Structure probing data (2A3 and DMS) for a 177-nucleotide construct. Values cover nucleotides 27 to 126. Source: RMDB library TTRINS, as collected in RNAgym. 2A3 adducts were read by reverse transcription with SuperScript II with manganese. For DMS, 2,476 sequencing reads were counted.
RNA sequence: GGGAACGACUCGAGUAGAGUCGAAAAGAUAUGGAUAACGAACGCGCAUCUAAAUGAUGACCCCUACCUCUAUUCGGAAACGAAUAGAGGUAGGGCAAGUUUAGAAUGCUAAGCGUUAUCCUAAGUCGAUACUACGAAACUUCGGUUUCGUAGUAUCAAAAGAAACAACAACAACAAC
Reactivity to 2A3 in 0.01 (KOAc 150mM, MgCl2 10mM, bicine 150mM(pH8.5), 24C), signal-to-noise 2, nucleotides 027 to 126: g110a020u180a050u210g000g000a000u000a020a000c020g010a140a050c070g060c040g000c160a020u000c020u050a010a050a030u150g270a260u120g050a060c010c000c000c020u000a000c000c000u000c000u000a000u010u020c010g020g050a080a080a090c000g000a020a010u000a010g010a000g010g000u000a000g000g000g000c000a000a010g010u000u000u010a050g020a300a100u020g010c030u030a110a030g070c010g000u000u020a000u000c000c010u010a110a010g100u040c110
Reactivity to DMS in 0.01 (KOAc 150mM, MgCl2 10mM, bicine 150mM(pH8.5), 24C), signal-to-noise 3, nucleotides 027 to 126: g030a130u010a300u000g030g010a030u000a000a010c000g010a040a050c120g040c300g010c000a020u000c000u000a000a030a010u000g010a080u020g010a150c300c000c000c000u000a000c000c000u000c000u000a010u000u000c000g000g000a150a110a270c000g000a010a000u000a010g000a000g000g010u000a000g000g000g050c020a000a030g000u000u010u000a000g000a040a050u000g040c000u000a240a140g000c000g000u000u000a000u000c000c000u000a040a140g030u000c070